Annotation
Chemical mapping of a 207-nucleotide RNA with 2A3. The RNA was probed in 150 mM KOAc, 10 mM MgCl2 and 150 mM bicine (pH 8.5) at 24 C. The 2A3 profile rests on 1,451 reads. For 2A3 the reverse transcriptase was SuperScript II with manganese. The data come from the RNA Mapping Database (RMDB), library M2RFPK.
RNA sequence: GGGAACGACUCGAGUAGAGUCGAAAAUACCGCAGGCCUGCGGUGCGGCAGUGUGGAGACCUGCCGUAAGCCGUGUUGUUUUGACAACCGGGAGAAAGCGUAUGCGGAGGCGGCGCUUUCAGGGUCUAAAAGUAUGGGAUCUUCGGAUCCCAUACAAUCCAUUAGAUGGGUUCGCCCAUCUAAUGGAAAAAGAAACAACAACAACAAC
Reactivity to 2A3 in 0.01 (KOAc 150mM, MgCl2 10mM, bicine 150mM(pH8.5), 24C), signal-to-noise 2, nucleotides 027 to 156: u050a000c000c000g000c010a000g010g030c000c020u020g000c000g000g000u000g000c000g010g010c010a010g000u010g000u070g280g080a060g030a090c000c000u000g010c000c000g000u000a000a010g030c000c020g100u140g010u140u040g010u000u120u120u300g100a010c000a010a000c000c000g000g000g000a020g000a000a010a000g000c000g000u040a220u290g060c050g030g070a040g120g110c000g010g000c000g010c000u020u000u000c000a000g010g000g000u000c000u020a020a020a080a040g000u000a000u000g000g000g000a000u020c000u020u030c180g070g000a000u010c000c000c000a000u000a000c000a000a000